Conditions: 150 mM KOAc, 10 mM MgCl2 and 150 mM bicine (pH 8.5), 24 C.
The record gives the reactivity of an RNA of 207 nucleotides to DMS and 2A3.
For DMS the reverse transcriptase was MarathonRT.
The data come from the RNA Mapping Database (RMDB), library OK3TST.
RNA sequence: GGGAACGACUCGAGUAGAGUCGAAAAAUAGGAAGCUCCAUGGCAUGUCUCCAUCUUUCAAGGUGACUGAGAGGUUUAUUUUCAUAGGAGCCUCAGUGGCCUUGUCCGUACCCACCUCUGCACGUGGUUGCAGAAAGUGAAGGAUUGUCAGGGAGCAAUGGCAUAAUUAGUUCGCUAAUUAUGCCAUAAAAGAAACAACAACAACAAC
Reactivity to DMS in 0.01 (KOAc 150mM, MgCl2 10mM, bicine 150mM(pH8.5), 24C), signal-to-noise 2, nucleotides 027 to 156: a130u010a130g020g000a100a100g030c040u000c000c040a070u010g020g010c020a050u010g020u000c010u000c050c030a070u000c020u000u000u010c010a000a060g000g050u000g030a080c020u010g000a050g030a070g010g030u010u000u010a070u030u000u000u010c180a220u000a120g050g010a030g000c020c000u000c020a030g000u010g010g010c010c020u000u000g000u000c070c020g000u000a090c050c020c020a060c020c030u000c010u000g010c080a120c060g040u000g030g000u010u000g000c000a040g000a020a020a060g020u000g010a140a090g000g000a130u000u000g020u000c030a050g020g000g020a060g080c030a090
Reactivity to 2A3 in 0.01 (KOAc 150mM, MgCl2 10mM, bicine 150mM(pH8.5), 24C), signal-to-noise 4, nucleotides 027 to 156: a020u190a040g120g040a150a030g010c000u010c000c010a010u020g000g000c020a040u070g070u050c050u020c100c020a100u040c030u020u030u030c010a010a000g030g000u080g110a030c020u030g030a040g020a040g100g020u040u100u050a170u060u140u090u060c110a110u170a160g150g040a030g030c010c000u000c000a000g010u020g060g000c000c000u010u000g010u000c000c020g030u040a100c030c020c000a010c000c030u020c020u040g020c020a010c060g300u280g040g050u200u000g000c000a000g010a020a020a010g020u030g050a080a040g000g010a010u020u020g000u000c010a010g010g000g000a000g000c010a010